[RMDB]
RNA sequence: GGGAACGACUCGAGUAGAGUCGAAAAAGACUAGCUUACGAGCUAGUCAGGUGCGUCUCUAGUGCAACUCUUGGUUUUUUAUACAAGUAUUGCACUUGAGACGGCCACGCUGGCUACGGCCAGCGAAACUCGUUAAUUUCUUCGGAAAUUAACGAGUAAAAGAAACAACAACAACAAC
Reactivity to DMS in 0.01 (KOAc 150mM, MgCl2 10mM, bicine 150mM(pH8.5), 24C), signal-to-noise 3, nucleotides 027 to 126: a040g000a000c000u000a000g000c000u000u000a130c250g020a050g010c000u000a000g010u010c010a010g000g010u000g020c000g000u000c000u000c010u000a010g010u000g010c000a010a000c080u000c000u000u010g000g000u000u010u050u040u050u050a050u040a080c000a010a000g000u000a090u000u000g000c000a010c000u010u000g000a020g000a010c000g010g000c010c000a210c020g020c000u010g000g020c000u000a130c190g030g000c030c000a000g010c030g010a040a120
Reactivity to 2A3 in 0.01 (KOAc 150mM, MgCl2 10mM, bicine 150mM(pH8.5), 24C), signal-to-noise 9, nucleotides 027 to 126: a000g010a000c000u000a000g010c000u070u040a080c270g060a020g000c000u010a000g000u000c000a000g060g000u120g280c000g000u000c000u000c000u010a000g000u000g000c000a000a020c030u000c010u050u010g110g030u120u070u070u060u110u200a290u100a070c000a000a000g020u040a030u000u010g000c000a000c000u000u000g000a000g000a010c000g000g000c000c000a030c010g000c000u000g000g000c000u010a070c260g130g000c000c000a000g000c000g000a050a010
Chemical mapping of a 177-nucleotide RNA with DMS and 2A3. Values are in units of 0.01, from 0 to 300, in steps of 10. The reactions ran in a buffer of 150 mM KOAc, 10 mM MgCl2 and 150 mM bicine (pH 8.5), at 24 C. Source: RMDB libraries RFM100 and RFMREP, as collected in RNAgym. For DMS the reverse transcriptase was MarathonRT.